[RMDB]
RNA sequence: GGGAACGACUCGAGUAGAGUCGAAAACAGUCUCAACGUUUCAACAGAAGAGUAUUCUGCGGAGGUCUCGAGACUCAAGCAGACUCUAACUGCAAGAAAUGUUCUCCACGGUCUAGCUGGUGGAAUAACUACAGUCCACAUUCGUGUGGACUGUAGUAAAAGAAACAACAACAACAAC
Reactivity to DMS in 0.01 (KOAc 150mM, MgCl2 10mM, bicine 150mM(pH8.5), 24C), signal-to-noise 3, nucleotides 027 to 126: c290a190g000u000c040u010c020a100a090c040g020u000u000u000c000a150a120c010a030g000a160a040g000a060g020u010a110u020u000c020u000g000c120g000g000a300g000g010u000c040u000c270g010a120g000a010c000u000c030a070a300g000c020a040g000a030c000u000c010u000a090a070c010u010g010c070a050a100g000a000a010a060u000g000u000u020c090u000c010c010a020c000g000g000u010c110u000a060g000c000u000g010g040u000g030g010a060a150u000a040
Reactivity to 2A3 in 0.01 (KOAc 150mM, MgCl2 10mM, bicine 150mM(pH8.5), 24C), signal-to-noise 1, nucleotides 027 to 126: c020a010g050u000c020u000c040a000a000c010g000u000u030u000c030a050a050c010a000g030a030a000g000a040g040u070a230u170u080c000u010g000c000g040g150a030g030g000u000c100u120c130g290a300g020a030c010u050c030a030a010g030c000a000g000a020c000u000c010u030a070a080c020u010g040c060a150a130g000a000a020a000u020g010u040u000c030u000c020c010a040c020g070g000u100c130u150a100g010c060u110g220g000u030g000g080a060a070u080a080